[RMDB]
Conditions: 150 mM KOAc, 10 mM MgCl2 and 150 mM bicine (pH 8.5), 24 C. This 207-nucleotide RNA was probed chemically with DMS and 2A3. Source: RMDB library OK3TST, as collected in RNAgym. For DMS the reverse transcriptase was MarathonRT. For 2A3, 2,660 sequencing reads were counted.

RNA sequence: GGGAACGACUCGAGUAGAGUCGAAAAUACUUUACCAGUGAGGAAAUGGGCUUUGAGUAAUGAAGUCAUGUACCCAAGGCCUAAUGGCUUUGAUCCUAGAUCCAUUUGAUUUCCUAAGCUCACUCUCAACUAGGGUAAGCCUUGGUGGGUGGAUAUGGCCUAUAAAUCAGUUCGCUGAUUUAUAGGCAAAAGAAACAACAACAACAAC
Reactivity to DMS in 0.01 (KOAc 150mM, MgCl2 10mM, bicine 150mM(pH8.5), 24C), signal-to-noise 2, nucleotides 027 to 156: u010a070c030u000u010u010a110c020c030a050g010u000g010a120g020g000a030a090a080u000g000g020g030c010u010u000u020g010a080g010u010a080a070u010g010a100a150g020u010c110a070u000g020u000a030c040c010c010a020a050g010g040c020c020u010a060a080u010g000g040c070u000u010u010g020a110u010c020c060u000a130g010a070u000c010c030a060u000u000u020g010a100u010u000u000c000c000u000a100a090g010c020u010c010a020c030u000c010u010c050a080a100c120u010a230g000g030g020u010a030a040g000c010c010u000u000g000g020u000g000g030g000u000g000g010a070u000a060u000g020
Reactivity to 2A3 in 0.01 (KOAc 150mM, MgCl2 10mM, bicine 150mM(pH8.5), 24C), signal-to-noise 4, nucleotides 027 to 156: u070a000c020u050u050u010a050c020c010a050g020u040g080a040g000g050a020a100a110u130g000g000g010c010u010u010u030g030a060g020u080a070a100u130g080a130a050g110u170c010a050u140g050u060a030c020c020c020a000a010g020g000c030c010u090a070a050u040g000g000c040u070u040u140g030a040u020c010c010u010a030g030a080u030c020c030a070u050u040u140g050a050u030u060u120c000c000u040a050a040g020c000u030c020a040c020u040c000u020c040a080a250c040u050a010g020g010g030u040a070a040g010c000c010u010u000g000g000u030g010g010g020u040g010g030a050u040a070u170g130